Structure probing data (DMS and 2A3) for a 207-nucleotide construct. It was measured as part of the RMDB library OK3TST. The DMS profile rests on 1,989 reads. 2A3 is a SHAPE reagent: it acylates the 2'-hydroxyl of flexible nucleotides of all four kinds. 2A3 adducts were read by reverse transcription with SuperScript II with manganese.

[RMDB]
RNA sequence: GGGAACGACUCGAGUAGAGUCGAAAACGUUAAAGAUACGGCUAAAUUAGUUUCACGAACCCGGUAUGGUUUGAAACAACGUAUCGCUAAGCUUAGUAGUAAAAUAACACGAUUAGUAGACUACGCCGGAUGGAAAUUUGCCGCUUACUUAACGCGAGUACAGGACGAGAUUCGUCUCGUCCUGUACAAAAGAAACAACAACAACAAC
Reactivity to DMS in 0.01 (KOAc 150mM, MgCl2 10mM, bicine 150mM(pH8.5), 24C), signal-to-noise 1, nucleotides 027 to 156: c010g000u000u030a030a060a070g020a140u010a010c010g000g040c030u010a050a050a160u000u000a100g010u000u010u000c070a160c070g010a080a050c050c010c000g000g000u000a120u000g010g000u000u000u000g000a100a140a110c010a080a150c050g020u000a040u000c040g070c070u000a050a190g010c040u000u010a130g030u000a110g050u000a020a090a050a170u000a070a090c060a090c000g020a110u030u000a140g010u000a080g030a080c030u000a030c020g000c000c030g010g000a060u000g000g010a030a050a090u010u010u000g030c000c000g000c010u000u000a150c050u020u000a030a010c020g020c040g010a190
Reactivity to 2A3 in 0.01 (KOAc 150mM, MgCl2 10mM, bicine 150mM(pH8.5), 24C), signal-to-noise 3, nucleotides 027 to 156: c000g000u000u000a060a040a000g010a050u030a060c000g020g000c050u080a040a050a100u140u060a070g080u020u070u090c150a160c100g040a040a060c030c000c040g000g010u100a080u210g090g040u050u070u150g140a110a090a020c040a020a030c020g070u090a030u080c050g000c020u030a030a070g040c020u050u110a010g010u010a010g030u030a070a100a170a170u150a100a030c060a000c030g060a040u000u040a040g060u010a050g040a020c030u000a020c060g000c020c010g030g000a030u070g070g020a090a060a040u040u060u070g000c030c010g000c040u050u100a030c000u010u010a060a000c040g010c030g060a000